[RMDB]
RNA sequence: GGGAACGACUCGAGUAGAGUCGAAAAAGCGGCGGGACAAUCAACAUGCAACUGUCAAAUCCGGCCGAUAGCACCGUGGCGCUUGAUGUAUCGCAGUUUCUCUUUUCGUCGCAAUUCAAGGGCCAAUUCAAGAUUUACGACCAAUUCGACACGGCCCGUAAGAAAUGGUUUUCGAACCAUUUCUUACAAAAGAAACAACAACAACAAC
Reactivity to DMS in 0.01 (KOAc 150mM, MgCl2 10mM, bicine 150mM(pH8.5), 24C), signal-to-noise 4, nucleotides 027 to 156: a120g010c030g010g010c000g000g050g000a070c040a080a120u000c030a060a080c030a070u000g040c100a070a090c110u000g010u000c020a080a120a090u010c040c020g040g030c000c020g030a090u000a070g020c070a110c060c040g030u010g020g010c050g010c110u000u010g010a110u000g020u000a060u000c050g000c050a120g010u000u000u000c040u010c030u010u000u000u000c040g030u000c010g030c010a060a110u000u010c040a070a150g000g010g040c010c010a070a120u000u000c090a090a140g010a150u000u000u010a080c030g010a040c020c040a050a150u000u000c040g030a140c100a060c050g000g010c000c010c050
Reactivity to 2A3 in 0.01 (KOAc 150mM, MgCl2 10mM, bicine 150mM(pH8.5), 24C), signal-to-noise 7, nucleotides 027 to 156: a000g030c020g010g010c050g000g010g030a030c060a060a120u180c050a060a070c030a070u160g070c030a060a040c080u080g020u090c050a030a040a110u030c040c020g070g000c030c010g070a060u110a050g050c060a040c090c050g050u070g040g010c090g010c080u040u050g020a020u040g060u110a080u110c070g000c020a030g020u020u110u010c070u030c000u070u080u040u030c020g040u020c010g000c050a070a110u110u080c060a070a070g020g010g000c020c010a000a050u130u090c050a070a010g040a140u050u110u160a100c070g040a040c040c040a060a090u100u090c030g050a030c030a000c130g000g000c000c010c000